[RMDB]
RNA sequence: GGGAACGACUCGAGUAGAGUCGAAAAGAUUUACAAUAUAGGAGGUCAUAAUGAAAGAAGUAAUCUAGAAGUAGUAAAAAUGAUAUUAAAUCUUUUAGGUAAAUCUGAAGAGUUAAUAUCCUAUGUACGCCACUACUAAUUUCGAUUAGUAGUGGCGAAAAGAAACAACAACAACAAC
Reactivity to 2A3 in 0.01 (KOAc 150mM, MgCl2 10mM, bicine 150mM(pH8.5), 24C), signal-to-noise 2, nucleotides 027 to 126: g010a010u050u050u100a100c090a080a140u150a030u120a170g060g010a000g000g050u070c090a060u030a220a020u120g050a010a090a100g050a010a000g100u050a020a110u010c040u080a030g010a210a010g070u030a000g030u190a050a000a080a140a140u130g000a030u000a000u040u070a040a140a160u000c020u000u110u010u100a020g030g000u160a030a040a000u130c000u000g010a010a000g020a010g000u000u020a000a070u020a030u040c030c020u050a060u190g040u060a050
Reactivity to DMS in 0.01 (KOAc 150mM, MgCl2 10mM, bicine 150mM(pH8.5), 24C), signal-to-noise 1, nucleotides 027 to 126: g000a100u000u030u000a030c030a060a210u050a140u080a090g010g020a000g010g040u000c050a070u050a070a060u050g000a070a080a170g000a050a240g030u010a020a040u030c030u020a030g000a060a230g000u000a070g000u010a020a100a030a150a110u060g000a070u000a050u000u000a030a000a030u000c000u040u000u000u050a000g000g000u040a050a050a110u040c000u000g000a000a070g000a070g000u000u000a000a010u000a010u000c000c180u020a070u020g010u000a090
Chemical mapping of a 177-nucleotide RNA with 2A3 and DMS. It was measured as part of the RMDB library OK1LIB. The DMS profile rests on 1,103 reads. 2A3 adducts were read by reverse transcription with SuperScript II with manganese.